RNA sequence: GGGAACGACUCGAGUAGAGUCGAAAAGAUAUGGAAUGUUCCCAUGCCUCAUCGAUCUCGGAAACGAGGGAGAGGGAUGGGAGACAUUCCUAAGUCAAACGACAGUACACUUCGGUGUACUGUCGAAGUACUUCAACUAGUUCGCUAGUUGAAGUACAAAAGAAACAACAACAACAAC
Reactivity to DMS in 0.01 (KOAc 150mM, MgCl2 10mM, bicine 150mM(pH8.5), 24C), signal-to-noise 7, nucleotides 027 to 126: g010a030u000a300u000g000g000a010a000u000g010u000u000c000c000c000a000u000g000c000c000u010c010a300u000c200g000a060u000c000u000c000g000g000a140a090a200c010g000a020g000g010g000a050g010a020g010g000g000a000u000g000g010g000a010g010a010c000a010u000u000c000c000u000a010a070g000u000c040a070a120a270c020g000a010c000a000g000u000a010c000a000c000u000u010c200g020g000u000g010u000a010c000u000g000u000c000g000a010a050
Reactivity to 2A3 in 0.01 (KOAc 150mM, MgCl2 10mM, bicine 150mM(pH8.5), 24C), signal-to-noise 8, nucleotides 027 to 126: g020a010u090a050u140g000g010a000a010u010g000u020u030c000c020c010a010u100g210c000c000u130c050a300u300c070g040a070u010c010u000c010g020g050a120a080a080c010g000a010g010g010g010a040g000a000g010g010g020a000u010g000g000g000a110g040a010c000a000u010u000c000c000u010a100a030g040u000c040a140a030a050c020g000a000c000a000g000u020a000c010a000c010u070u180c300g160g000u000g000u000a000c000u010g000u000c000g000a000a000

Chemical mapping of a 177-nucleotide RNA with DMS and 2A3. 2A3 adducts were read by reverse transcription with SuperScript II with manganese. 2A3 is a SHAPE reagent: it acylates the 2'-hydroxyl of flexible nucleotides of all four kinds. Conditions: 150 mM KOAc, 10 mM MgCl2 and 150 mM bicine (pH 8.5), 24 C. The data come from the RNA Mapping Database (RMDB), library TTRDEL.